[RMDB]
RNA sequence: GGGAACGACUCGAGUAGAGUCGAAAAUUAACUUGAAAACCACUUAUCUUAUCCCAGAACUGCUCCUACCACAAUAUAAGGGGUAAAAAAUGGUUUUUAGUUUGUGAGGUCAUGUGGAUUUUUCACCCAGUUAGCUUUAGUUCGCUAAAGCUAACUGAAAAGAAACAACAACAACAAC
Reactivity to DMS in 0.01 (KOAc 150mM, MgCl2 10mM, bicine 150mM(pH8.5), 24C), signal-to-noise 2, nucleotides 027 to 126: u010u000a070a030c040u000u010g000a020a040a020a040c010c000a020c080u000u000a080u000c090u000u000a040u020c010c010c000a140g010a140a150c140u000g000c050u000c040c020u020a120c090c070a160c090a030a060u010a050u010a130a100g020g010g010g020u000a000a000a060a030a010a060u010g000g000u000u010u000u000u000a000g020u000u000u000g020u000g020a100g000g010u000c030a070u000g040u000g010g000a100u000u000u000u020u000c040a080c070c090